Source information:
This 177-nucleotide RNA was probed chemically with DMS and 2A3. The reactions ran in a buffer of 150 mM KOAc, 10 mM MgCl2 and 150 mM bicine (pH 8.5), at 24 C. 2A3 adducts were read by reverse transcription with SuperScript II with manganese. It was measured as part of the RMDB library OK2TRN. High DMS reactivity at an A or C suggests that its Watson-Crick edge is free. DMS adducts were read by reverse transcription with MarathonRT. The 2A3 profile rests on 25,873 reads.
[RMDB]
RNA sequence: GGGAACGACUCGAGUAGAGUCGAAAAGAGAAGGAUUGAUGCCCUGAAGCACAGGUCCUGUUCAAAGCAUUAAUUCAGUAGAGAAAAGAUCGGCAACUGUCUCAUGAUAUGAGGUAAUGAGCAUUGGGUACUAAUACUCAUUCGUGAGUAUUAGUACAAAAGAAACAACAACAACAAC
Reactivity to DMS in 0.01 (KOAc 150mM, MgCl2 10mM, bicine 150mM(pH8.5), 24C), signal-to-noise 9, nucleotides 027 to 126: g010a130g020a130a080g010g010a040u000u000g010a070u000g000c020c020c080u000g010a100a100g010c080a070c110a090g000g000u000c060c050u000g000u000u010c050a050a090a100g000c030a030u000u000a030a060u010u000c030a080g010u000a090g010a140g000a070a060a080a090g000a060u000c070g000g010c050a050a070c140u000g000u000c010u000c010a030u000g010a100u010a290u000g000a050g010g000u010a060a050u000g000a060g000c050a090u000u000g010g010
Reactivity to 2A3 in 0.01 (KOAc 150mM, MgCl2 10mM, bicine 150mM(pH8.5), 24C), signal-to-noise 9, nucleotides 027 to 126: g110a000g040a120a070g030g020a020u040u050g020a010u060g010c010c030c000u050g080a090a020g060c050a020c020a100g020g110u080c010c030u050g040u090u080c060a070a040a030g010c010a030u020u070a030a040u100u040c030a020g080u090a040g100a010g060a100a110a060a020g060a060u090c030g050g000c020a040a020c060u050g040u070c010u010c020a020u070g120a050u060a080u260g080a050g060g030u060a070a070u060g030a010g030c040a050u080u160g160g010